[RMDB]
RNA sequence: GGGAACGACUCGAGUAGAGUCGAAAAAUUACUCCACAGGCCUGACCACGUGGUACUGCAACCAGUUAAGUUACGCUCCGGCACCUAAUCAAGCUGGAAUAAGGGACGGCGCUGCCAGGCGGCACACAGAUAGUUCCGGAUUCGUCCGGAACUAUCUAAAAGAAACAACAACAACAAC
Reactivity to DMS in 0.01 (KOAc 150mM, MgCl2 10mM, bicine 150mM(pH8.5), 24C), signal-to-noise 3, nucleotides 027 to 126: a010u040u030a050c180u010c000c020a080c100a150g000g000c010c060u000g020a080c130c050a100c080g020u040g010g020u020a040c040u000g000c060a230a110c010c030a090g020u040u010a130a160g000u010u000a070c140g010c060u000c030c020g000g000c070a110c070c120u000a060a080u040c120a140a060g000c000u000g010g010a100a040u040a070a170g010g000g000a050c020g000g010c090g030c040u000g000c060c010a030g000g000c050g000g040c020a060c150a160c150
Reactivity to 2A3 in 0.01 (KOAc 150mM, MgCl2 10mM, bicine 150mM(pH8.5), 24C), signal-to-noise 4, nucleotides 027 to 126: a020u090u070a070c070u010c020c010a050c030a050g020g080c020c020u070g010a050c010c040a020c140g070u040g030g010u030a120c020u070g030c030a060a110c010c010a030g010u060u180a120a030g020u060u050a080c090g020c020u000c010c020g030g000c040a040c020c020u140a130a140u230c100a100a030g040c020u030g000g070a140a060u110a060a070g040g000g030a010c020g000g040c000g030c040u000g030c010c000a030g010g040c000g040g000c010a000c000a000c000

Chemical mapping of a 177-nucleotide RNA with DMS and 2A3.
The 2A3 profile rests on 2,563 reads.
The RNA was probed in 150 mM KOAc, 10 mM MgCl2 and 150 mM bicine (pH 8.5) at 24 C.
The DMS profile rests on 2,793 reads.
Values cover nucleotides 27 to 126.